[RMDB]
RNA sequence: GGGAACGACUCGAGUAGAGUCGAAAAGACAGGGAGAAAGGAUGGCUCAGGUUUGGCUCAGACUCUUUUGCAAAAUGUCCAUUGGGGACUGUUCAAAGCAGCAAUAUGUCCCAUCAAAUAGAAGUUAAAACUCAUUGUACUUUUCUCAAUACAAGGAGACUUGUUGUGAGUUCGCUCACAACAAGUCAAAAGAAACAACAACAACAAC
Reactivity to 2A3 in 0.01 (KOAc 150mM, MgCl2 10mM, bicine 150mM(pH8.5), 24C), signal-to-noise 1, nucleotides 027 to 156: g040a010c060a020g020g020g050a040g050a060a130a000g050g000a080u070g030g000c000u050c090a040g040g000u010u020u020g000g000c000u050c070a020g010a200c020u000c020u140u080u110u130g000c030a040a040a040a140u090g060u000c030c050a060u040u060g010g020g000g010a020c000u020g030u030u100c040a110a050a070g040c010a000g000c010a030a060u110a070u130g020u050c010c010c020a030u110c020a000a040a040u080a030g050a040a000g000u100u130a080a080a030a010c050u110c000a030u080u030g030u050a060c050u020u040u040u010c060u020c000a050a120u200a030c020a030a010g240g010a060